[RMDB]
Source: RMDB library OK2TRN, as collected in RNAgym. An RNA of 177 nucleotides, treated with DMS and 2A3 and read out base by base. For 2A3 the reverse transcriptase was SuperScript II with manganese.
RNA sequence: GGGAACGACUCGAGUAGAGUCGAAAACUGUUAAUACCAAGGUGUCGGCCUUUGCAGGAACUCUAAAACUGCUUUUGAGUGCAAGCUUUGGUGCAUCAUGAAUGGAUAUAUAUUCUAAAUUUUGUCCCCAUAAAAGUACGUUCGCGUACUUUUAUGGAAAAGAAACAACAACAACAAC
Reactivity to DMS in 0.01 (KOAc 150mM, MgCl2 10mM, bicine 150mM(pH8.5), 24C), signal-to-noise 5, nucleotides 027 to 126: c070u000g010u020u010a090a120u010a050c020c010a040a020g010g030u000g010u020c270g000g010c000c020u000u000u010g010c010a020g000g020a120a100c200u020c210u020a050a080a090a140c050u000g010c020u000u000u000u000g010a070g010u010g010c060a090a190g000c010u000u000u000g000g020u000g010c160a040u000c090a080u000g000a060a070u010g000g010a060u000a110u000a090u010a060u000u000c030u020a040a060a120u000u000u000u010g000u010c070c040
Reactivity to 2A3 in 0.01 (KOAc 150mM, MgCl2 10mM, bicine 150mM(pH8.5), 24C), signal-to-noise 5, nucleotides 027 to 126: c010u010g040u160u150a120a040u080a210c000c010a010a000g010g000u060g070u150c070g120g000c000c000u060u030u050g000c010a000g060g060a110a050c050u020c010u260a060a080a110a090c010u020g040c000u120u100u080u130g150a110g010u190g090c020a030a040g000c000u010u030u020g020g000u020g010c010a100u100c010a040u140g180a130a070u110g040g020a030u080a010u020a040u030a070u300u040c050u110a110a160a300u110u190u060u120g040u050c000c010